The record gives the reactivity of an RNA of 207 nucleotides to 2A3 and DMS. The 2A3 profile rests on 1,469 reads. Source: RMDB library OK3TST, as collected in RNAgym. The reactions ran in a buffer of 150 mM KOAc, 10 mM MgCl2 and 150 mM bicine (pH 8.5), at 24 C. High DMS reactivity at an A or C suggests that its Watson-Crick edge is free.
RNA sequence: GGGAACGACUCGAGUAGAGUCGAAAAAAUUCGGGGACAGGUAACCAAGCAGGAUUUCCAGUUUAAGACGGUCGUAUGGUCUAUCAGCGGUCUUGCCAAUGCGAUGUACUACGGUGUGCCUGAAUCUGACAUGCGUUUUGACCAAGGAACAGGCGUCCGAGUAAGUCAUGUUCGCAUGACUUACUCGAAAAGAAACAACAACAACAAC
Reactivity to 2A3 in 0.01 (KOAc 150mM, MgCl2 10mM, bicine 150mM(pH8.5), 24C), signal-to-noise 1, nucleotides 027 to 156: a000a000u120u080c050g000g000g010g010a000c000a010g000g030u040a110a040c020c020a040a030g060c020a000g040g030a030u110u000u040c050c030a030g030u090u060u080a100a030g040a030c050g080g000u070c020g030u100a060u120g030g030u030c070u090a090u100c010a010g040c010g000g030u030c000u020u090g020c040c020a090a070u090g040c030g080a020u070g070u070a060c020u020a020c060g000g020u100g030u080g050c000c010u030g030a010a060u100c050u040g020a020c010a040u120g010c040g060u070u040u070u140g060a040c030c030a010a060g080g000a090a050c040a040g010g090c010g010u060c070
Reactivity to DMS in 0.01 (KOAc 150mM, MgCl2 10mM, bicine 150mM(pH8.5), 24C), signal-to-noise 2, nucleotides 027 to 156: a030a110u000u000c030g000g040g020g040a290c040a080g000g010u000a120a130c030c010a110a080g020c060a070g030g000a170u000u000u000c050c040a170g030u010u000u000a040a080g000a070c040g000g010u000c070g060u010a100u000g030g000u000c030u010a120u010c060a100g050c020g060g030u020c020u010u000g010c000c050a050a060u000g050c010g020a110u000g030u000a080c020u010a170c110g010g020u000g050u000g040c000c000u000g000a060a110u000c050u000g020a100c070a060u000g000c100g010u010u000u000u010g000a100c040c020a100a140g020g010a060a100c060a040g000g020c060g020u000c060